RNA sequence: GGGAACGACUCGAGUAGAGUCGAAAACUGGCGUAGGCGGAUUCGCGGUCGGGGCUCGGGUAGAAGUUCGACUUGGGGAUGCCGGAGCCGGGGGUACUCGGCUCACGCACGGCGGUAUUCCGCAAGCCCAAGAAGUUAUGUUCGCAUAACUUCUUGGAAAAGAAACAACAACAACAAC
Reactivity to 2A3 in 0.01 (KOAc 150mM, MgCl2 10mM, bicine 150mM(pH8.5), 24C), signal-to-noise 9, nucleotides 027 to 126: c020u030g040g020c040g060u080a060g040g040c040g030g040a110u090u070c050g010c040g090g030u080c040g020g000g020g020c020u020c040g030g010g010u060a070g040a240a030g010u040u070c040g030a060c050u030u060g060g000g000g030a010u030g020c000c000g020g000a000g000c000c000g000g010g000g000g030u170a220c010u000c000g000g000c000u000c010a060c050g050c010a020c020g060g000c000g000g020u030a070u100u030c000c010g040c080a010a020g000c000
Reactivity to DMS in 0.01 (KOAc 150mM, MgCl2 10mM, bicine 150mM(pH8.5), 24C), signal-to-noise 4, nucleotides 027 to 126: c040u010g010g000c050g020u010a060g010g020c030g010g010a090u020u020c070g020c060g000g010u020c090g010g010g010g000c030u000c030g010g020g000u030a050g000a080a130g000u010u010c020g000a150c020u010u010g000g000g000g000a030u010g000c020c010g000g000a010g010c010c000g020g000g000g010g030u030a060c000u000c010g000g000c000u000c000a040c100g000c050a050c050g000g010c000g010g010u010a020u010u000c000c000g000c030a030a050g010c180